[RMDB]
RNA sequence: GGGAACGACUCGAGUAGAGUCGAAAAGAUAUGGAAUACAUUCGAUAAGUCCUGGAUCGGAAACGAUCCACGGACUUUUGACGAAUGUUCCUAAGUCAAAACGUGCGUCCGUUCGCGGACGCACGAACUACCAUACCUUGUUCGCAAGGUAUGGUAGAAAAGAAACAACAACAACAAC
Reactivity to DMS in 0.01 (KOAc 150mM, MgCl2 10mM, bicine 150mM(pH8.5), 24C), signal-to-noise 3, nucleotides 027 to 126: g010a050u000a300u000g000g000a050a050u010a090c020a020u000u010c000g010a150u010a000a010g010u000c000c000u010g000g010a000u000c000g010g000a100a090a150c010g020a010u000c000c010a010c250g020g010a000c010u000u000u000u000g000a270c110g000a020a010u010g010u000u000c000c000u000a040a150g000u000c040a060a050a070a180c010g010u010g010c010g020u000c000c000g030u000u010c250g030c000g010g010a010c000g010c000a000c000g000a020a060
Reactivity to 2A3 in 0.01 (KOAc 150mM, MgCl2 10mM, bicine 150mM(pH8.5), 24C), signal-to-noise 2, nucleotides 027 to 126: g020a020u060a040u190g030g030a060a050u180a210c020a030u010u000c000g040a060u020a160a020g000u010c020c000u020g010g010a000u000c010g000g040a090a040a040c010g000a010u030c050c000a020c090g000g000a000c000u030u010u010u020g020a010c010g000a010a010u000g000u000u000c000c010u040a110a040g100u070c050a000a000a020a200c010g010u030g000c000g000u000c020c000g040u040u080c300g030c010g160g000a000c000g000c000a000c020g000a000a010
An RNA of 177 nucleotides, treated with DMS and 2A3 and read out base by base. For DMS the reverse transcriptase was MarathonRT. For 2A3 the reverse transcriptase was SuperScript II with manganese. For DMS, 4,360 sequencing reads were counted. The reactions ran in a buffer of 150 mM KOAc, 10 mM MgCl2 and 150 mM bicine (pH 8.5), at 24 C.